Chemical mapping of a 177-nucleotide RNA with 2A3 and DMS. The reactions ran in a buffer of 150 mM KOAc, 10 mM MgCl2 and 150 mM bicine (pH 8.5), at 24 C. For 2A3 the reverse transcriptase was SuperScript II with manganese. DMS adducts were read by reverse transcription with MarathonRT. Values cover nucleotides 27 to 126. The 2A3 profile rests on 3,062 reads. Source: RMDB library OK2TRN, as collected in RNAgym.

[RMDB]
RNA sequence: GGGAACGACUCGAGUAGAGUCGAAAAAGGAUAACACAUGGUAAGCCUGUUGAAAGCUUCAAAGGACUUGUCAACUUUUACAGAGUUAUGUGCAUCUCUGGUGACAACACCAAAUGGGGUCCAAUACUAAAUUCUGUCUUUUCGAAGACAGAAUUUAAAAAGAAACAACAACAACAAC
Reactivity to 2A3 in 0.01 (KOAc 150mM, MgCl2 10mM, bicine 150mM(pH8.5), 24C), signal-to-noise 3, nucleotides 027 to 126: a010g090g000a070u120a210a030c020a010c010a030u080g010g020u040a040a000g030c000c020u070g100u070u010g050a090a070a060g080c070u100u040c070a050a040a080g030g020a130c020u040u040g040u080c040a040a060c010u100u130u100u110a060c040a020g030a010g020u070u090a130u140g150u090g100c020a090u020c020u000c000u040g000g050u000g010a040c060a140a020c010a050c010c000a000a090a100u100g000g000g000g020u000c010c010a030a030u150a110c070
Reactivity to DMS in 0.01 (KOAc 150mM, MgCl2 10mM, bicine 150mM(pH8.5), 24C), signal-to-noise 6, nucleotides 027 to 126: a080g010g010a060u010a140a110c040a020c070a060u000g010g010u000a090a100g000c050c020u000g000u010u000g010a050a060a110g010c100u000u010c080a040a060a100g020g000a100c100u010u000g000u000c020a040a100c080u000u000u010u010a090c070a050g010a050g010u000u000a060u010g010u000g010c110a060u000c030u000c050u000g010g010u000g000a080c180a050a080c080a040c020c030a030a080a110u000g010g000g010g020u000c030c040a040a100u010a080c120